[RMDB]
RNA sequence: GGGAACGACUCGAGUAGAGUCGAAAAUUUAGCUUUCCGGUUAACCACCUCAAAGCUACGCGCUAAUGAUAAUAUCUUAUCAGUUAGAUUCACUGCUAACAAAAUUGUUGGUGGUGCUCCUACAUGGCUUCAAAUAGCUGUUCGCAGCUAUUUGAAGAAAAGAAACAACAACAACAAC
Reactivity to 2A3 in 0.01 (KOAc 150mM, MgCl2 10mM, bicine 150mM(pH8.5), 24C), signal-to-noise 3, nucleotides 027 to 126: u030u020u010a000g000c000u020u030u010c050c000g010g000u010u020a070a030c040c010a020c000c030u030c010a010a010a000g020c020u020a040c060g090c010g000c040u010a030a010u020g020a010u010a060a070u110a120u140c060u010u020a020u020c010a090g070u050u030a010g010a050u050u090c000a000c020u010g000c000u010a020a000c030a040a120a200a300u170u100g000u000u000g000g010u010g000g000u010g000c020u020c010c000u050a090c020a160u190g160g000
Reactivity to DMS in 0.01 (KOAc 150mM, MgCl2 10mM, bicine 150mM(pH8.5), 24C), signal-to-noise 3, nucleotides 027 to 126: u000u020u000a030g010c000u000u000u000c040c070g010g020u010u000a080a170c300c190a190c000c000u010c100a000a030a020g030c010u010a010c300g000c180g010c020u000a030a090u000g010a010u010a000a040u020a150u000c190u000u000a020u010c010a010g020u000u000a010g000a140u000u000c010a030c020u000g010c010u000a000a000c000a030a080a120a180u000u010g000u000u000g010g000u010g010g030u000g010c180u000c000c000u000a060c220a080u000g000g010